Chemical mapping of a 177-nucleotide RNA with DMS and 2A3.
Reactivities are given for positions 27 through 126.
The RNA was probed in 150 mM KOAc, 10 mM MgCl2 and 150 mM bicine (pH 8.5) at 24 C.
The DMS profile rests on 870 reads.
RNA sequence: GGGAACGACUCGAGUAGAGUCGAAAAGCAUGAUGCUGCGCGCGCCGGGUCGAUCAAUAUGCCGAGUAGUCUCAAUCGACUCCCAUACGCUGUGGCGAUCAGAAUCGAUUUGGCAGGGGUCGCUGUGGCACUACUCUGUCUUCGGACAGAGUAGUGCAAAAGAAACAACAACAACAAC
Reactivity to DMS in 0.01 (KOAc 150mM, MgCl2 10mM, bicine 150mM(pH8.5), 24C), signal-to-noise 1, nucleotides 027 to 126: g010c090a140u000g000a080u000g000c070u000g000c070g030c120g030c180g000c040c110g000g020g000u000c020g010a050u000c060a070a130u050a090u000g040c040c000g020a080g010u000a080g000u000c020u020c060a070a080u010c080g000a100c040u000c040c020c050a070u000a120c110g020c080u000g020u010g030g000c030g020a060u000c170a160g000a080a030u000c050g000a090u000u000u030g000g000c010a130g000g010g010g000u000c090g000c070u000g040u010g010
Reactivity to 2A3 in 0.01 (KOAc 150mM, MgCl2 10mM, bicine 150mM(pH8.5), 24C), signal-to-noise 1, nucleotides 027 to 126: g040c030a050u140g020a070u140g140c030u020g010c010g020c000g040c020g000c040c020g000g020g030u020c020g020a010u010c020a070a100u150a100u290g050c040c020g030a000g000u070a020g030u030c010u010c050a070a050u050c030g000a030c000u080c000c020c000a140u170a070c040g000c050u080g050u080g130g000c020g020a060u060c060a020g000a060a080u030c000g000a040u070u010u050g020g000c040a070g050g000g090g000u090c050g000c050u090g020u050g050